[RMDB]
RNA sequence: GGGAACGACUCGAGUAGAGUCGAAAACAAGUGUUAUGGGACCGCACCUUCAGUCUUUUCCAGCAGCUCAUUCAGAGGUAACUCAAGGGACAUUUAUUUGUACCUUCUGUAAUCGGUCUAUACAGAGCUCUGUAGGAGUAUUCGUACUCCUACAGAGAAAAGAAACAACAACAACAAC
Reactivity to DMS in 0.01 (KOAc 150mM, MgCl2 10mM, bicine 150mM(pH8.5), 24C), signal-to-noise 4, nucleotides 027 to 126: c070a110a080g000u010g010u010u020a040u020g010g000g000a030c020c020g000c240a050c010c030u000u020c060a060g000u020c020u010u000u010u010c040c050a070g000c070a080g000c030u010c040a060u010u010c100a120g010a040g000g000u010a110a080c030u010c110a040a020g000g000g000a040c020a000u000u020u050a110u040u000u000g020u000a030c000c010u000u000c070u000g000u010a060a070u030c050g000g000u010c010u010a080u000a060c040a030g000a090g010
Reactivity to 2A3 in 0.01 (KOAc 150mM, MgCl2 10mM, bicine 150mM(pH8.5), 24C), signal-to-noise 9, nucleotides 027 to 126: c050a060a080g050u040g050u250u160a120u160g050g010g010a020c000c020g010c030a030c020c010u070u110c060a060g030u030c030u020u090u030u030c030c010a030g020c020a010g010c060u010c030a110u180u030c020a060g030a030g100g030u070a080a050c020u020c080a020a060g030g000g020a030c020a030u120u180u150a250u110u150u060g030u080a140c010c000u060u060c010u020g030u030a060a060u140c050g020g010u000c010u020a040u010a040c030a020g050a020g030
The record gives the reactivity of an RNA of 177 nucleotides to DMS and 2A3. The data come from the RNA Mapping Database (RMDB), library OK1LIB. High 2A3 reactivity points to a flexible backbone, as in loops and unpaired stretches. For 2A3, 9,533 sequencing reads were counted. Values are in units of 0.01, from 0 to 300, in steps of 10. For DMS the reverse transcriptase was MarathonRT. The DMS profile rests on 10,845 reads. For 2A3 the reverse transcriptase was SuperScript II with manganese. The reactions ran in a buffer of 150 mM KOAc, 10 mM MgCl2 and 150 mM bicine (pH 8.5), at 24 C.